[RMDB]
RNA sequence: GGGAACGACUCGAGUAGAGUCGAAAAGAGACUUAGAAUCAUUUGUCCAAGGUCUCAUAGCUAGUAAGGAGUGACAUGGGGACUUGAAUCAAGUCAGUGAGACUGCAAAGAUUAUUCGCUUAGUAACAUGCUUGUGGUGCUUGCUAAAAUCUAGCUACGAAAAUUAGUGGUUCGCCACUAAUUUUCGAAAAGAAACAACAACAACAAC
Reactivity to 2A3 in 0.01 (KOAc 150mM, MgCl2 10mM, bicine 150mM(pH8.5), 24C), signal-to-noise 3, nucleotides 027 to 156: g040a020g000a010c060u140u140a050g100a120a110u150c050a150u110u110u230g080u030c070c050a080a040g020g000u000c000u000c000a020u060a010g020c040u010a010g020u060a180a110g030g020a060g060u070g030a020c030a120u040g000g000g020g020a010c000u060u030g090a030a020u130c030a030a010g080u020c020a000g030u010g050a040g020a070c000u030g010c030a020a060a000g020a050u070u080a040u130u140c060g040c060u050u080a020g010u060a090a030c030a070u090g010c030u080u060g040u040g030g020u030g070c020u010u020g010c010u020a070a070a050a000u080c030u030a010g000c020u000a020
Reactivity to DMS in 0.01 (KOAc 150mM, MgCl2 10mM, bicine 150mM(pH8.5), 24C), signal-to-noise 2, nucleotides 027 to 156: g010a100g000a030c050u000u020a090g010a120a060u000c130a130u010u000u000g000u000c000c010a070a070g010g020u010c020u000c000a110u000a130g030c030u000a090g000u010a120a150g010g030a100g040u000g040a100c070a070u000g020g020g030g010a050c040u000u000g010a080a090u000c070a050a070g000u000c030a090g000u010g030a160g010a050c000u000g000c050a040a120a160g000a150u000u000a120u010u000c070g050c070u000u010a110g000u000a040a050c050a060u000g000c020u000u030g050u000g030g060u000g010c100u000u060g000c000u010a070a070a080a130u000c050u030a060g020c000u000a220
Notes:
This 207-nucleotide RNA was probed chemically with 2A3 and DMS. For DMS the reverse transcriptase was MarathonRT. The RNA was probed in 150 mM KOAc, 10 mM MgCl2 and 150 mM bicine (pH 8.5) at 24 C.